Conditions: 150 mM KOAc, 10 mM MgCl2 and 150 mM bicine (pH 8.5), 24 C. Structure probing data (2A3 and DMS) for a 177-nucleotide construct. It was measured as part of the RMDB library OK1LIB.
RNA sequence: GGGAACGACUCGAGUAGAGUCGAAAAGCUUAAAUAGAGAUGUAAAGGGUAUUGUAACGAUGUGUGCACCAAUGGGUGGCAAAACUGAAGGUGCCAUUUAUGAAGGCUUUUUAGAGUAUGCACGUAAGAGUGUUUUCAUCUUCGGAUGAAAACACUCAAAAGAAACAACAACAACAAC
Reactivity to 2A3 in 0.01 (KOAc 150mM, MgCl2 10mM, bicine 150mM(pH8.5), 24C), signal-to-noise 2, nucleotides 027 to 126: g080c080u100u090a020a030a000u260a140g190a030g060a060u200g040u110a150a000a000g040g040g020u110a110u080u090g080u070a150a030c040g000a130u000g120u000g010u040g050c030a000c020c000a000a010u100g190g000g000u070g000g020c050a000a000a100a150c030u100g070a030a000g080g000u010g020c010c030a060u160u210u000a070u030g110a120a020g000g000c000u030u000u000u000u150a060g010a090g060u230a110u120g040c120a110c140g050u010a200a030
Reactivity to DMS in 0.01 (KOAc 150mM, MgCl2 10mM, bicine 150mM(pH8.5), 24C), signal-to-noise 1, nucleotides 027 to 126: g060c000u010u000a050a090a030u050a070g000a110g000a050u050g000u010a040a160a020g020g010g000u000a050u010u000g020u000a060a180c130g010a090u000g000u070g000u000g010c000a040c020c000a080a070u020g000g010g090u010g020g000c050a020a070a020a090c100u000g040a170a140g030g000u000g010c030c020a000u000u000u040a040u000g000a190a080g000g000c000u000u000u030u010u000a120g020a090g010u000a040u050g040c090a000c180g010u030a070a100